Conditions: 150 mM KOAc, 10 mM MgCl2 and 150 mM bicine (pH 8.5), 24 C. The record gives the reactivity of an RNA of 207 nucleotides to DMS and 2A3. DMS adducts were read by reverse transcription with MarathonRT. 2A3 adducts were read by reverse transcription with SuperScript II with manganese. For 2A3, 1,753 sequencing reads were counted.

[RMDB]
RNA sequence: GGGAACGACUCGAGUAGAGUCGAAAAUUAUUGAUCGUUCACAUGGAGAGCGCACCUAACAUGGACACAGAUACCCGAAUUGGUUAUAUCAAUUCCUUGAAGCACAAGUAUAACGUUCAGAAGAUCAAUGGUGAUAUCGGGUACGGUCAAUACGAGGGAGAAGUCUCAGAUUCGUCUGAGACUUCUCAAAAGAAACAACAACAACAAC
Reactivity to DMS in 0.01 (KOAc 150mM, MgCl2 10mM, bicine 150mM(pH8.5), 24C), signal-to-noise 1, nucleotides 027 to 156: u010u020a040u010u010g010a000u000c030g000u010u000c080a080c040a150u000g030g020a220g010a090g000c070g010c020a060c010c020u000a060a030c090a050u010g020g000a070c070a070c050a060g000a190u000a060c020c030c060g000a100a050u000u000g020g030u010u020a130u010a080u050c020a030a160u000u000c010c070u000u000g020a070a110g020c020a120c150a010a160g010u000a100u000a030a050c070g000u000u010c010a130g000a100a050g030a130u000c020a040a060u010g000g020u000g020a080u000a070u010c020g020g030g020u000a070c010g010g010u010c020a030a070u000a030c080g010a170g030g000
Reactivity to 2A3 in 0.01 (KOAc 150mM, MgCl2 10mM, bicine 150mM(pH8.5), 24C), signal-to-noise 3, nucleotides 027 to 156: u090u020a010u000u020g000a000u000c030g020u060u070c040a030c050a140u060g070g000a090g010a010g040c080g010c020a050c010c010u030a090a040c000a040u040g010g020a010c030a000c010a140g040a120u030a050c000c000c020g010a020a020u040u030g040g030u270u070a140u020a030u190c040a070a080u090u040c010c010u080u110g060a040a010g040c020a030c020a080a060g060u080a080u040a240a070c070g010u030u030c050a040g000a180a000g020a110u030c020a040a090u090g050g000u050g020a050u020a050u090c010g020g000g000u000a000c000g030g010u000c000a000a020u050a060c070g000a030g070g060